About this RNA:
This 177-nucleotide RNA was probed chemically with DMS and 2A3. For DMS the reverse transcriptase was MarathonRT. Reactivities are given for positions 27 through 126. For DMS, 6,995 sequencing reads were counted. The reactions ran in a buffer of 150 mM KOAc, 10 mM MgCl2 and 150 mM bicine (pH 8.5), at 24 C. The 2A3 profile rests on 10,962 reads. For 2A3 the reverse transcriptase was SuperScript II with manganese.
RNA sequence: GGGAACGACUCGAGUAGAGUCGAAAAGAUAUGGAUCGUGAACUACAGCGAAACGAAGCGUUGAAAUCUCGUAAAUCGGAAACGAUUUACGAGAUGGAGCUUCUGAGUAGCUGCACGAUCCUAAGUCCUAAAGUGUCUUGUUCGCAAGACACUUUAGAAAAGAAACAACAACAACAAC
Reactivity to DMS in 0.01 (KOAc 150mM, MgCl2 10mM, bicine 150mM(pH8.5), 24C), signal-to-noise 6, nucleotides 027 to 126: g010a120u000a240u010g010g000a010u000c000g010u000g010a120a060c160u010a300c010a010g010c000g000a150a180a230c300g000a010a000g010c000g010u000u020g000a140a140a020u000c000u010c000g010u000a000a020a000u000c000g010g010a110a100a210c000g020a010u000u000u000a000c000g000a000g010a000u000g000g000a100g010c000u000u000c000u020g010a050g010u000a120g010c000u000g010c000a010c010g010a000u000c000c000u000a010a080g010u000c030
Reactivity to 2A3 in 0.01 (KOAc 150mM, MgCl2 10mM, bicine 150mM(pH8.5), 24C), signal-to-noise 3, nucleotides 027 to 126: g070a030u120a040u240g000g000a000u010c020g020u010g010a080a120c110u220a060c300a010g000c010g040a040a000a000c030g010a010a000g000c010g100u150u080g050a090a100a010u010c000u000c010g000u000a000a010a000u010c000g020g050a050a070a030c000g010a000u000u000u000a000c000g020a000g000a000u000g000g000a000g000c000u000u010c000u010g000a000g000u010a000g000c010u000g010c000a000c000g000a000u000c000c000u010a010a000g010u020c010